[RMDB]
RNA sequence: GGGAACGACUCGAGUAGAGUCGAAAAGGAGGAUGUGCGGAACGUUGCCAGACCUUUCAUCGAAAGAACAUUCGAUAUGAUCGAUAAGAUUCAUCAUGAAUCCAGAGAUUGCGUCGGAGACCUUCUCGAACCAGCUCUUAUUCGUAAGAGCUGGUUCAAAAGAAACAACAACAACAAC
Reactivity to DMS in 0.01 (KOAc 150mM, MgCl2 10mM, bicine 150mM(pH8.5), 24C), signal-to-noise 2, nucleotides 027 to 126: g000g010a060g010g010a090u020g010u010g020c070g050g020a080a150c110g020u000u010g030c030c050a140g010a110c020c030u000u000u000c060a100u010c080g040a060a050a110g000a080a080c180a160u000u000c010g000a020u000a050u010g000a020u010c020g000a300u020a120a090g000a050u000u000c010a060u030c120a140u000g000a050a050u000c000c040a080g010a300g000a050u010u000g000c060g010u000c000g000g000a040g000a170c060c050u010u000c030u000c090
Reactivity to 2A3 in 0.01 (KOAc 150mM, MgCl2 10mM, bicine 150mM(pH8.5), 24C), signal-to-noise 1, nucleotides 027 to 126: g080g000a020g050g030a040u110g000u120g040c070g030g030a130a000c080g100u110u140g040c020c010a040g010a210c030c020u060u140u050c090a140u090c030g000a090a010a040g090a070a020c070a120u060u000c020g000a010u020a110u090g020a010u020c010g040a000u000a100a090g020a020u020u000c010a110u020c020a040u290g040a010a030u000c000c040a020g030a010g000a120u000u080g000c040g000u000c020g040g020a020g010a020c000c000u000u020c050u000c080

The data come from the RNA Mapping Database (RMDB), library OK2TRN.
Structure probing data (DMS and 2A3) for a 177-nucleotide construct.
For 2A3 the reverse transcriptase was SuperScript II with manganese.
The RNA was probed in 150 mM KOAc, 10 mM MgCl2 and 150 mM bicine (pH 8.5) at 24 C.
High 2A3 reactivity points to a flexible backbone, as in loops and unpaired stretches.